[RMDB]
RNA sequence: GGGAACGACUCGAGUAGAGUCGAAAAAUUGAGCUUGAACAUUUAAUCAGUCCAUUGUUCGCAAUAGGCCGAGUAUAUCGACACCGCAGCAGACGGUCGAGCACAACCGUUCGUCGGUGUUCAGAAAAUGUCAUACGGUUUUCGAACCGUAUGACAUAAAAGAAACAACAACAACAAC
Reactivity to 2A3 in 0.01 (KOAc 150mM, MgCl2 10mM, bicine 150mM(pH8.5), 24C), signal-to-noise 2, nucleotides 027 to 126: a000u100u090g020a020g020c030u060u050g040a060a020c020a100u110u150u240a110a060u160c000a000g040u000c010c010a030u040u070g000u010u030c110g010c100a030a090u050a060g030g000c040c010g010a020g090u090a130u050a030u250c030g010a010c000a000c010c000g070c030a040g000c010a030g000a010c000g000g020u050c020g060a100g070c060a050c030a110a020c020c000g030u060u090c020g050u090c010g000g000u000g000u010u010c010a000g050a000a120a000
Reactivity to DMS in 0.01 (KOAc 150mM, MgCl2 10mM, bicine 150mM(pH8.5), 24C), signal-to-noise 2, nucleotides 027 to 126: a100u010u030g010a100g010c070u010u020g000a050a090c080a050u000u000u000a080a060u000c090a050g020u000c020c030a050u010u000g030u010u020c120g030c060a040a050u010a050g010g010c010c030g000a050g020u020a080u000a070u000c120g020a020c010a020c000c010g000c160a050g030c160a100g010a060c020g010g010u010c050g050a100g000c130a080c140a100a010c000c010g010u000u000c070g000u000c000g020g000u000g010u010u000c060a140g000a080a040a050

This 177-nucleotide RNA was probed chemically with 2A3 and DMS. For DMS, 1,800 sequencing reads were counted. 2A3 adducts were read by reverse transcription with SuperScript II with manganese. The RNA was probed in 150 mM KOAc, 10 mM MgCl2 and 150 mM bicine (pH 8.5) at 24 C.